[RMDB]
RNA sequence: GGGAACGACUCGAGUAGAGUCGAAAAGGGUGAAUGAUUCAGAGGACAGCGGCAAACGGGGUAGUAAUGCAUAGGUAUGUACCCUCUGGUCGGGAAUAGCCACGGGAAACUGUGGGUAAUGCCCGAUCACAAAUGGUUGAUUCGUCAACCAUUUGUGAAAAGAAACAACAACAACAAC
Reactivity to 2A3 in 0.01 (KOAc 150mM, MgCl2 10mM, bicine 150mM(pH8.5), 24C), signal-to-noise 9, nucleotides 027 to 126: g050g010g030u060g040a100a080u100g040a080u110u070c030a010g010a020g040g020a030c020a040g020c020g040g010c030a040a060a030c070g010g000g040g010u040a040g040u040a070a080u070g020c040a050u060a100g090g030u110a040u100g040u060a070c010c000c000u020c030u040g020g000u010c000g000g000g010a010a020u030a020g050c010c000a000c010g010g000g000a020a060a020c010u010g000u010g010g010g010u030a010a010u120g020c000c000c000g000a010u010
Reactivity to DMS in 0.01 (KOAc 150mM, MgCl2 10mM, bicine 150mM(pH8.5), 24C), signal-to-noise 7, nucleotides 027 to 126: g000g000g020u000g010a090a060u010g000a090u020u010c050a070g010a100g000g000a080c080a080g000c080g000g010c070a050a070a110c130g010g010g000g010u000a050g000u030a060a060u020g010c080a080u010a070g010g010u010a050u000g010u010a050c040c010c010u000c090u000g010g000u000c000g000g000g000a050a040u000a130g000c000c000a000c010g000g000g000a090a070a150c010u000g010u000g000g000g000u000a070a080u020g000c010c000c010g000a010u000
Chemical mapping of a 177-nucleotide RNA with 2A3 and DMS. The reactions ran in a buffer of 150 mM KOAc, 10 mM MgCl2 and 150 mM bicine (pH 8.5), at 24 C.